Notes: This 177-nucleotide RNA was probed chemically with DMS and 2A3. Values cover nucleotides 27 to 126. The reactions ran in a buffer of 150 mM KOAc, 10 mM MgCl2 and 150 mM bicine (pH 8.5), at 24 C.
RNA sequence: GGGAACGACUCGAGUAGAGUCGAAAAUGUAAUUGAUAGAUAUGUUAAAAAAUUAAUUGGAGGAGGGAAUGAUGCAUGUUGUGAAAUUUUUGCAACCAAUAGUACUGGGCAUCAUAGUGAAACAUGUAGUAGAGAGUAAUUUCGAUUACUCUCUACUAAAAGAAACAACAACAACAAC
Reactivity to DMS in 0.01 (KOAc 150mM, MgCl2 10mM, bicine 150mM(pH8.5), 24C), signal-to-noise 6, nucleotides 027 to 126: u010g010u010a050a080u010u010g010a080u010a080g010a110u010a060u030g000u020u020a000a030a050a090a060a070u000u020a040a070u010u010g000g010a080g010g000a090g020g000g000a100a030u000g010a030u010g010c070a090u010g010u010u010g030u010g000a030a100a180u010u020u010u000u000g010c060a010a050c020c190a040a070u010a100g020u000a140c120u020g000g010g000c010a020u000c040a020u020a060g000u000g000a130a030a030c090a070u010g010u000
Reactivity to 2A3 in 0.01 (KOAc 150mM, MgCl2 10mM, bicine 150mM(pH8.5), 24C), signal-to-noise 6, nucleotides 027 to 126: u070g010u070a040a050u100u060g030a060u080a160g040a020u130a050u210g080u090u160a080a060a020a040a050a080u140u110a050a060u090u060g030g010a070g030g010a050g000g040g040a040a040u050g000a010u030g000c060a030u080g000u030u000g020u030g070a130a260a300u190u170u040u070u030g000c010a020a020c010c020a080a040u040a070g080u040a070c120u060g010g060g000c000a020u020c010a010u030a020g060u030g070a060a040a040c060a090u080g030u100